[RMDB]
RNA sequence: GGGAACGACUCGAGUAGAGUCGAAAAUAAAGCCAAUUGUGACUGCUGCAUCCACUGUCCUUCCUUAACAACGCUGUACACUCGAUUGGCUUGAUGAUAAUUGCCAUCAGUGUCUUCAUAAGGUGCAACGAGUAUCGGUCUUCGGACCGAUACUCGUAAAAGAAACAACAACAACAAC
Reactivity to DMS in 0.01 (KOAc 150mM, MgCl2 10mM, bicine 150mM(pH8.5), 24C), signal-to-noise 1, nucleotides 027 to 126: u050a070a030a150g010c010c010a040a040u010u060g070u000g010a090c090u000g030c010u000g040c060a060u040c030c080a120c120u000g000u010c040c050u000u010c040c000u000u040a070a070c260a160a070c170g040c030u000g000u030a050c020a030c010u000c170g000a000u010u000g010g000c000u000u010g010a120u000g000a080u010a180a140u000u000g020c040c000a010u000c030a020g000u000g010u000c010u020u040c030a100u010a100a070g060g050u000g010c100a120
Reactivity to 2A3 in 0.01 (KOAc 150mM, MgCl2 10mM, bicine 150mM(pH8.5), 24C), signal-to-noise 1, nucleotides 027 to 126: u060a010a050a030g050c000c000a020a050u150u070g110u080g050a040c030u020g010c040u000g000c040a050u070c010c020a030c070u010g000u020c000c010u010u130c020c030u000u000a000a100c090a050a010c110g000c050u010g060u150a010c020a020c020u080c140g040a030u010u200g010g030c000u000u060g060a100u110g030a010u040a200a100u040u110g000c020c000a000u000c000a010g010u000g000u000c000u050u020c010a070u040a150a020g110g040u080g000c000a040

Source: RMDB library OK2TST, as collected in RNAgym. Structure probing data (DMS and 2A3) for a 177-nucleotide construct. The RNA was probed in 150 mM KOAc, 10 mM MgCl2 and 150 mM bicine (pH 8.5) at 24 C. 2A3 adducts were read by reverse transcription with SuperScript II with manganese.